Source information:
Chemical mapping of a 177-nucleotide RNA with 2A3 and DMS. For 2A3, 6,747 sequencing reads were counted. The DMS profile rests on 3,195 reads. The RNA was probed in 150 mM KOAc, 10 mM MgCl2 and 150 mM bicine (pH 8.5) at 24 C. 2A3 adducts were read by reverse transcription with SuperScript II with manganese.
RNA sequence: GGGAACGACUCGAGUAGAGUCGAAAACUUCGGUAGUUCGCUACCGAAGAAAAGACAGACUACGCAACUGUCAAAAACACAUCAAAAGUGUAAAAGCGUAGAAAAGUUCCCACUUCGGUGGGAACAACUCUGAAAUAGAGUUCGCUCUAUUUCAGAGAAAAGAAACAACAACAACAAC
Reactivity to 2A3 in 0.01 (KOAc 150mM, MgCl2 10mM, bicine 150mM(pH8.5), 24C), signal-to-noise 3, nucleotides 027 to 126: c000u000u000c010g010g000u010a010g020u040u050c240g020c090u000a000c000c000g000a000a000g000a000a050a000a000g000a000c000a010g020a020c020u010a000c020g000c030a190a090c050u010g000u010c010a010a020a020a030a000c030a000c010a010u180c070a050a100a100a100g000u010g010u030a080a170a030a000g000c000g000u000a010g050a010a080a010a010g000u000u000c000c010c000a010c010u020u040c240g080g000u010g010g010g000a000a000c000a000a000
Reactivity to DMS in 0.01 (KOAc 150mM, MgCl2 10mM, bicine 150mM(pH8.5), 24C), signal-to-noise 3, nucleotides 027 to 126: c000u000u000c000g020g020u000a000g030u010u010c180g040c000u000a000c000c000g010a010a000g000a040a060a120a120g000a010c010a000g000a090c010u010a010c010g010c000a140a030c020u000g000u020c000a040a130a100a160a080c020a010c020a080u000c200a090a090a140a160g000u000g000u000a090a070a020a090g000c000g010u000a000g010a210a110a100a150g000u000u000c010c000c000a010c000u000u010c190g020g020u010g000g010g010a000a000c000a030a080